Record summary: An RNA of 177 nucleotides, treated with DMS and 2A3 and read out base by base.
[RMDB]
RNA sequence: GGGAACGACUCGAGUAGAGUCGAAAACUUGAACCCCGUGGACGACUCGUGGGUGUUGCCGUGCAUCGGGUCGCAUUGCCAGAUCACCUGAUGCCCGGUGGCCUGGACCUUCUCCACGAUCGGUGGCGAAGAGCAUAAGGUUCGCCUUAUGCUCUUCAAAAGAAACAACAACAACAAC
Reactivity to DMS in 0.01 (KOAc 150mM, MgCl2 10mM, bicine 150mM(pH8.5), 24C), signal-to-noise 5, nucleotides 027 to 126: c080u000u000g010a120a130c020c010c050c040g020u000g010g010a060c120g010a040c250u000c080g020u010g000g010g010u000g020u000u000g000c000c000g010u000g000c010a000u000c010g010g000g000u000c170g040c150a050u000u010g020c140c200a120g010a090u000c040a040c000c000u000g000a030u000g000c000c030c020g000g020u000g010g010c000c050u000g020g010a070c090c080u000u000c050u000c010c010a020c010g000a040u000c140g000g010u010g010g010c230
Reactivity to 2A3 in 0.01 (KOAc 150mM, MgCl2 10mM, bicine 150mM(pH8.5), 24C), signal-to-noise 5, nucleotides 027 to 126: c030u050u130g080a050a070c000c000c000c000g040u030g020g030a070c090g010a030c060u030c120g060u110g030g010g010u120g080u110u120g000c000c000g020u010g010c000a000u000c010g030g000g040u120c100g000c080a100u030u160g210c060c040a060g030a120u050c010a010c010c000u000g010a000u000g000c040c000c000g010g010u000g040g000c000c020u020g100g040a040c000c030u060u030c050u000c020c000a010c000g010a060u180c040g040g060u040g040g000c070
For 2A3, 7,169 sequencing reads were counted.
Values cover nucleotides 27 to 126.
It was measured as part of the RMDB library OK2TST.